[RMDB]
RNA sequence: GGGAACGACUCGAGUAGAGUCGAAAAAGACUUGCUGCUGCAGCCGCUGACAUUUGGCCAGCUACUGGACAAGCUCUUAAAGGACUAGGAGACUUCUUGCAGAGUACGGUAGGGUCCCUGUUAGGGACACGAAGCUAAGUUUCGACUUAGCUUCGUGAAAAGAAACAACAACAACAAC
Reactivity to 2A3 in 0.01 (KOAc 150mM, MgCl2 10mM, bicine 150mM(pH8.5), 24C), signal-to-noise 8, nucleotides 027 to 126: a000g050a030c020u020u050g020c020u020g000c010u040g000c020a020g020c020c030g030c050u030g030a050c030a130u140u160u180g070g000c020c000a020g030c030u060a050c040u060g040g010a030c040a070a040g000c010u000c000u040u120a120a120a050g100g020a050c060u050a040g050g010a060g040a060c000u040u020c010u060u070g020c040a010g020a030g090u070a050c040g030g020u030a020g070g030g000u030c000c000c000u050g180u210u180a090g010g000g000a000
Reactivity to DMS in 0.01 (KOAc 150mM, MgCl2 10mM, bicine 150mM(pH8.5), 24C), signal-to-noise 9, nucleotides 027 to 126: a070g010a100c050u000u000g010c040u000g010c050u000g010c030a050g010c060c090g020c030u000g010a050c050a190u000u000u010g020g020c020c020a040g010c040u000a050c060u000g000g010a100c110a070a080g000c040u000c020u000u000a050a100a120g010g000a110c120u000a070g010g010a110g000a090c060u000u000c040u000u000g000c070a060g010a070g010u010a060c100g010g010u000a060g010g000g010u000c000c000c010u000g010u010u010a060g010g000g000a110
Structure probing data (2A3 and DMS) for a 177-nucleotide construct. 2A3 adducts were read by reverse transcription with SuperScript II with manganese. The data come from the RNA Mapping Database (RMDB), library OK2TRN. DMS adducts were read by reverse transcription with MarathonRT. The DMS profile rests on 36,886 reads.